Annotation:
The record gives the reactivity of an RNA of 177 nucleotides to 2A3 and DMS. For 2A3, 767 sequencing reads were counted. The RNA was probed in 150 mM KOAc, 10 mM MgCl2 and 150 mM bicine (pH 8.5) at 24 C. It was measured as part of the RMDB library OK1LIB.
RNA sequence: GGGAACGACUCGAGUAGAGUCGAAAAGCCCAUCGGGCCCAUAUUCGAGGAUCUCGCUGCGGCCCACCGCGAGCAGACCCCGCGCAUCGUCGAUAACCGCCGCAUCGGCACGCGCCGAACCCAGCGAAAGCGUAUAGCCCUUCGGGGCUAUACGCUUAAAAGAAACAACAACAACAAC
Reactivity to 2A3 in 0.01 (KOAc 150mM, MgCl2 10mM, bicine 150mM(pH8.5), 24C), signal-to-noise 2, nucleotides 027 to 126: g060c000c010c020a040u090c070g030g060g050c050c000c060a090u120a080u210u110c040g040a050g130g050a130u130c000u000c090g040c010u060g060c050g010g020c000c010c000a000c010c010g020c000g030a050g060c040a000g080a100c000c000c000c000g000c020g010c000a000u070c050g090u000c010g000a030u060a130a040c000c020g000c000c000g000c030a030u050c000g000g060c000a000c010g090c000g010c000c000g000a010a060c040c000c000a000g070c030g170a070
Reactivity to DMS in 0.01 (KOAc 150mM, MgCl2 10mM, bicine 150mM(pH8.5), 24C), signal-to-noise 1, nucleotides 027 to 126: g000c000c000c000a040u030c090g000g000g000c000c190c000a210u090a120u000u000c000g000a120g010g050a110u050c000u000c060g040c030u000g000c090g000g120c010c110c150a040c060c060g070c050g000a070g060c000a080g000a110c030c000c000c000g020c130g010c060a140u000c110g000u000c080g020a120u050a110a060c030c000g030c000c030g000c170a040u020c010g000g000c070a150c030g050c080g000c010c010g010a090a230c000c000c000a050g040c050g000a070